[RMDB]
RNA sequence: GGGAACGACUCGAGUAGAGUCGAAAAGUAAGCAAAGACGUAAUAACCGUCAUGGUUAGUAAACUGAGCGCAUGCCGUAAGAAAUGCAAACGCGUUAUGAUUCAGAACACAUGGUGCGCUAUUAUAACCCACCACUCGAUUUCGAUCGAGUGGUGGGAAAAGAAACAACAACAACAAC
Reactivity to DMS in 0.01 (KOAc 150mM, MgCl2 10mM, bicine 150mM(pH8.5), 24C), signal-to-noise 1, nucleotides 027 to 126: g000u010a080a170g040c050a020a110a070g040a170c110g010u000a010a090u010a010a020c070c000g000u000c070a010u020g000g000u010u000a010g000u000a030a090a130c000u000g000a020g010c050g000c030a040u000g000c080c120g000u010a140a090g010a060a100a060u000g030c140a050a100a050c070g000c070g050u010u000a070u000g010a140u000u000c030a040g000a100a010c040a050c010a000u010g000g000u000g010c170g020c020u000a010u000u040a030u000a010a180
Reactivity to 2A3 in 0.01 (KOAc 150mM, MgCl2 10mM, bicine 150mM(pH8.5), 24C), signal-to-noise 1, nucleotides 027 to 126: g070u110a000a100g110c110a130a020a020g090a060c030g020u060a000a000u040a020a020c020c000g030u030c010a010u010g040g050u130u090a140g000u060a010a150a080c020u010g000a020g000c070g000c020a010u040g020c010c010g020u000a010a030g100a270a170a030u230g080c080a040a070a150c030g020c020g000u070u060a040u080g040a050u060u000c010a000g020a070a000c040a000c000a070u000g000g010u010g040c080g030c040u010a000u010u000a000u010a010a000
Conditions: 150 mM KOAc, 10 mM MgCl2 and 150 mM bicine (pH 8.5), 24 C. Chemical mapping of a 177-nucleotide RNA with DMS and 2A3. For 2A3, 947 sequencing reads were counted. The DMS profile rests on 778 reads.